[RMDB]
RNA sequence: GGGAACGACUCGAGUAGAGUCGAAAACAAUAACUUCGCUUUAGCUGCAUAAUAGUAGCUUAGCGUUCCUCCCUCCAUCGCCCAUGUGGUAGGGUAAGGGACUCACUUUAAGUGGGCUACGCCGGAGUUCGCCGUCUGAGGACGAAGGAAGAGAAUAGAUUCACCUAAACUUCGGUUUAGGUGAAUCAAAAGAAACAACAACAACAAC
Reactivity to 2A3 in 0.01 (KOAc 150mM, MgCl2 10mM, bicine 150mM(pH8.5), 24C), signal-to-noise 2, nucleotides 027 to 156: c030a020a100u120a120a080c060u080u090c010g030c000u060u000u180a010g000c000u000g000c020a050u080a220a100u110a300g020u000a010g020c010u000u020a000g000c000g020u010u030c000c000u030c000c000c000u000c000c000a000u010c040g030c000c000c000a010u020g010u000g010g060u080a030g000g000g040u050a120a060g020g000g030a010c040u050c080a190c110u150u180u200a050a010g000u000g000g000g000c000u000a000c010g010c000c000g020g000a030g030u000u000c010g000c080c090g090u040c120u050g060a010g000g000a010c010g000a000a020g000g000a010a000g020a000g030a030a030u140a080
Chemical mapping of a 207-nucleotide RNA with 2A3. The reactions ran in a buffer of 150 mM KOAc, 10 mM MgCl2 and 150 mM bicine (pH 8.5), at 24 C. The 2A3 profile rests on 1,135 reads.